Background: Chemical mapping of a 207-nucleotide RNA with DMS and 2A3. Reactivities are given for positions 27 through 156. For 2A3 the reverse transcriptase was SuperScript II with manganese. 2A3 is a SHAPE reagent: it acylates the 2'-hydroxyl of flexible nucleotides of all four kinds. The RNA was probed in 150 mM KOAc, 10 mM MgCl2 and 150 mM bicine (pH 8.5) at 24 C.
[RMDB]
RNA sequence: GGGAACGACUCGAGUAGAGUCGAAAAGACAACGGCAUGAUUACCAAUAAAGAACGCUAUAAUCGAUUGCCUUCUUUACUAGAUACGCGCACGAAACGGCAAAUACAUAUUUAUAUAUUCUGUGCCGAAUACACAAAAUUGUAUAUUACACUCGGAAAAUCAUUAGUGCUUUCGAGCACUAAUGAUUAAAAGAAACAACAACAACAAC
Reactivity to DMS in 0.01 (KOAc 150mM, MgCl2 10mM, bicine 150mM(pH8.5), 24C), signal-to-noise 1, nucleotides 027 to 156: g020a220c070a010a200c020g020g030c040a110u000g000a180u000u010a090c030c000a030a070u000a050a030a100g030a080a060c040g000c030u000a040u000a140a160u000c250g000a170u000u000g070c010c020u000u010c000u000u010u000a060c030u000a050g060a020u010a020c000g030c080g000c030a040c040g030a090a100a080c090g010g060c080a060a110a130u010a080c030a080u000a180u010u000u020a050u030a060u000a120u030u000c000u000g060u000g000c040c000g000a110a100u000a050c020a030c000a010a010a020a090u000u000g070u000a030u000a040u000u010a070c090a160c070u010c030g000g000a100a080
Reactivity to 2A3 in 0.01 (KOAc 150mM, MgCl2 10mM, bicine 150mM(pH8.5), 24C), signal-to-noise 2, nucleotides 027 to 156: g060a000c040a080a110c040g040g000c040a030u050g030a040u070u080a100c100c050a020a020u130a040a100a020g050a110a020c080g010c020u070a020u180a130a130u080c120g080a130u080u050g010c000c000u020u010c000u000u170u030a070c040u040a000g020a100u080a050c080g040c000g020c010a020c080g000a070a080a020c050g020g010c020a000a040a130u140a060c000a010u270a060u060u250u030a130u060a070u000a030u140u110c090u080g060u010g020c000c010g020a080a040u140a040c080a000c030a020a100a010a140u200u030g020u010a010u000a020u180u270a030c050a010c060u060c010g070g000a090a170